[RMDB]
RNA sequence: GGGAACGACUCGAGUAGAGUCGAAAACGCACUCGCAGCUUAAUAACCUGCGCUGAGCCCUUCUCCCCCAGCUUGCCUGUGUCCUAGGGAAUUGGAAGGUCAUCCUUCACUGGAUCGUGUGGAAGUCAUUACUCGUGAGUGUUCGCACUCACGAGAAGUAAGGAACGUGGUUCGCCACGUUCCUUACAAAAGAAACAACAACAACAAC
Reactivity to 2A3 in 0.01 (KOAc 150mM, MgCl2 10mM, bicine 150mM(pH8.5), 24C), signal-to-noise 1, nucleotides 027 to 156: c030g040c030a000c020u000c010g000c000a000g010c030u030u080a060a010u090a070a000c000c000u000g050c000g030c190u110g040a110g000c030c020c000u150u060c080u050c040c000c000c010c000a000g000c000u070u150g050c000c010u020g000u000g020u100c020c000u080a020g000g000g110a070a050u090u080g050g010a070a020g000g040u040c030a070u180c000c000u040u080c010a050c070u000g020g000a020u010c080g020u050g010u060g050g000a000a000g040u020c030a080u090u160a090c010u000c000g000u000g000a000g000u010g000u060u060c040g070c070a000c000u020c000a000c000g020a000g010a000a000
Reactivity to DMS in 0.01 (KOAc 150mM, MgCl2 10mM, bicine 150mM(pH8.5), 24C), signal-to-noise 1, nucleotides 027 to 156: c130g000c000a140c050u000c020g000c030a010g020c040u020u010a110a170u010a090a130c230c000u000g000c060g110c100u000g000a080g030c000c000c070u000u020c080u000c000c030c020c010c080a110g030c030u010u000g040c050c010u010g040u000g000u020c030c030u000a110g010g010g030a070a150u000u010g010g050a070a080g010g030u000c040a130u000c020c000u010u000c110a110c070u000g020g010a040u000c000g040u000g000u000g000g010a090a110g000u000c020a080u000u000a140c000u000c000g040u000g000a040g000u000g010u010u000c300g030c000a060c000u000c010a000c010g030a000g000a010a150